Background:
Chemical mapping of a 177-nucleotide RNA with 2A3. The 2A3 profile rests on 510 reads.
RNA sequence: GGGAACGACUCGAGUAGAGUCGAAAACAGCGGGGCGAUGGAGAACUGGGGGCUGAUCACGUUCCGAAGGGAGAGCCUUCUGUAUGUGCCUGGGAAGAGCAAUGUGGAGGACAUGAAGAAUGUGGCAGUUCGACAGCUGGUUCGCCAGCUGUCGAACAAAAGAAACAACAACAACAAC
Reactivity to 2A3 in 0.01 (KOAc 150mM, MgCl2 10mM, bicine 150mM(pH8.5), 24C), signal-to-noise 1, nucleotides 027 to 126: c000a000g040c050g000g030g080g070c110g000a070u000g010g070a100g000a180a110c050u030g000g000g010g050g000c000u000g120a110u010c000a000c110g000u000u000c000c000g000a070a070g040g000g000a230g120a180g200c000c010u080u000c000u080g100u000a160u110g050u000g000c000c040u020g000g000g000a000a000g060a050g140c030a070a220u070g170u100g000g010a070g040g000a050c000a020u080g000a010a060g040a040a000u000g000u030g050g000c020a030